[RMDB]
RNA sequence: GGGAACGACUCGAGUAGAGUCGAAAAGGCGCGCAGCGAUGUCAGUGAUAAAUUACACCAUAAGUGUAGACGCUGAGACAAUGUGUGCAGCUAGUACUACUGAUGGCGAGACACAAUACGCUGAUGCGAUUAUAUUAUUUUUCGAAAUAAUAUAAUCAAAAGAAACAACAACAACAAC
Reactivity to DMS in 0.01 (KOAc 150mM, MgCl2 10mM, bicine 150mM(pH8.5), 24C), signal-to-noise 9, nucleotides 027 to 126: g010g010c090g010c030g010c000a000g010c050g010a150u020g010u000c010a020g010u000g000a140u030a050a080a090u030u000a020c020a030c000c090a100u060a120a300g000u000g010u000a010g000a120c050g010c000u000g000a040g000a130c140a100a100u010g010u000g010u000g000c010a250g000c010u000a040g010u030a080c130u020a060c100u020g010a090u000g000g000c000g000a250g000a040c020a010c030a040a090u020a180c020g010c000u000g000a060u010g010c050
Reactivity to 2A3 in 0.01 (KOAc 150mM, MgCl2 10mM, bicine 150mM(pH8.5), 24C), signal-to-noise 8, nucleotides 027 to 126: g050g000c010g000c010g000c010a000g000c010g020a020u050g060u050c000a000g010u000g030a050u070a090a110a030u110u020a010c000a000c000c030a060u030a200a040g020u000g000u000a020g010a040c020g000c000u010g010a000g030a030c080a070a100u090g020u000g010u020g020c000a000g000c000u040a010g040u050a090c040u020a010c020u060g050a050u080g040g000c000g020a030g020a010c010a000c000a010a040u080a030c010g000c000u010g000a070u050g010c000